Structure probing data (2A3 and DMS) for a 177-nucleotide construct. It was measured as part of the RMDB library TTRDEL.

RNA sequence: GGGAACGACUCGAGUAGAGUCGAAAAGAUAUGGAAUUAGAAGUCUAGAAAGCAUCGUUGAAAUCGGAAACGAUGGAGAUGACUAAAAAGACCUAAUUCCUAAGUCAAACCACGCUUCGGCGUGGAACUCUAUACUUAUGUUCGCAUAAGUAUAGAGAAAAGAAACAACAACAACAAC
Reactivity to 2A3 in 0.01 (KOAc 150mM, MgCl2 10mM, bicine 150mM(pH8.5), 24C), signal-to-noise 8, nucleotides 027 to 126: g010a000u050a040u130g010g000a000a000u020u010a020g090a300a040g060u000c010u030a030g230a080a270a010g030c020a020u000c010g180u220u070g030a100a110a000u020c000g020g000a060a020a020c010g000a000u010g000g000a050g000a010u030g030a110c020u080a100a220a060a010a000g000a000c000c000u000a000a000u000u000c000c010u000a090a010g010u000c020a020a060a160c000c000a000c000g010c000u090u120c300g140g000c000g000u000g000g000a000a010
Reactivity to DMS in 0.01 (KOAc 150mM, MgCl2 10mM, bicine 150mM(pH8.5), 24C), signal-to-noise 7, nucleotides 027 to 126: g000a040u000a300u010g000g010a020a000u000u000a000g000a150a130g020u000c000u000a060g000a170a140a060g020c030a010u000c010g020u000u000g000a130a140a010u000c000g010g010a100a080a170c010g010a000u000g000g000a130g000a010u000g010a110c020u000a030a080a130a090a020g000a010c000c000u000a000a010u000u000c000c000u010a040a090g010u000c020a120a110a190c010c000a000c000g010c000u000u000c200g010g010c010g020u000g010g000a020a050